[RMDB]
RNA sequence: GGGAACGACUCGAGUAGAGUCGAAAAGUCUCCCGAUUCGUCGGGAGACCGAGAAAUUCAGGUGAUUUGCUACCUUUAAGUGCAGCUACAAAUUCAAAGGAAACACCAUGGCGUUCGCGCCAUGGAAUCGUGUCUCUGAAUUCGUUCAGAGACACGAAAAAGAAACAACAACAACAAC
Reactivity to DMS in 0.01 (KOAc 150mM, MgCl2 10mM, bicine 150mM(pH8.5), 24C), signal-to-noise 2, nucleotides 027 to 126: g010u000c000u000c000c000c000g000a000u000u000c170g040u000c010g000g000g020a020g000a000c000c000g010a080g000a300a060a100u000u000c040a020g000g030u000g000a120u000u010u020g020c020u000a030c030c000u000u010u010a000a010g000u010g000c030a030g030c220u010a080c160a030a080a090u000u000c100a060a070a080g000g020a100a030a050c110a120c000c000a010u000g000g000c000g000u010u010c240g020c000g020c000c000a010u000g000g000a020a000
Reactivity to 2A3 in 0.01 (KOAc 150mM, MgCl2 10mM, bicine 150mM(pH8.5), 24C), signal-to-noise 2, nucleotides 027 to 126: g000u020c000u000c000c000c000g000a000u020u040c200g020u010c020g100g000g020a050g000a010c000c000g040a040g070a030a180a060u190u190c050a020g020g020u030g040a270u090u070u110g000c000u010a010c000c000u100u140u180a010a000g000u000g010c000a000g000c030u100a050c090a060a110a110u100u120c040a070a130a080g140g040a120a110a000c020a010c040c000a020u010g000g000c010g020u020u030c250g000c000g000c070c000a010u010g000g010a000a020

Background: This 177-nucleotide RNA was probed chemically with DMS and 2A3. For DMS the reverse transcriptase was MarathonRT. Conditions: 150 mM KOAc, 10 mM MgCl2 and 150 mM bicine (pH 8.5), 24 C. It was measured as part of the RMDB library M2PK50.